[RMDB]
RNA sequence: GGGAACGACUCGAGUAGAGUCGAAAAAACAAACAUCAAAUCGCAUAGCAAAGAGUCAAAAAAAUAGAGAGCUUUGCGAGACCUACCAAGGGUGAAGAGAUACCAUCCAAGGAGCUCAAGAGAAAUCGAGAGCUCACGGCGUUCGCGCCGUGAGCAAGAUAAAGUCGGUGUUCGCACCGACUUUAUCAAAAGAAACAACAACAACAAC
Reactivity to 2A3 in 0.01 (KOAc 150mM, MgCl2 10mM, bicine 150mM(pH8.5), 24C), signal-to-noise 1, nucleotides 027 to 156: a000a000c140a080a110a050c010a030u210c030a020a190a000u040c010g000c010a030u020a020g030c020a100a170a000g070a150g090u090c120a120a130a050a130a080a100a000u300a070g030a030g000a000g000c000u010u050u000g000c010g000a030g030a020c000c000u080a110c050c000a010a040g010g020g010u030g030a020a100g090a010g000a080u080a160c000c030a020u000c030c000a030a020g030g000a030g030c000u020c060a000a090g060a010g090a050a030a150u090c080g020a000g000a010g090c000u010c000a010c010g000g050c070g010u000u140c160g000c020g010c080c060g010u010g000a000g000c020a020a000
Chemical mapping of a 207-nucleotide RNA with 2A3.
The RNA was probed in 150 mM KOAc, 10 mM MgCl2 and 150 mM bicine (pH 8.5) at 24 C.
Reactivities are rounded to 0.1 and cut off at 0 and 3.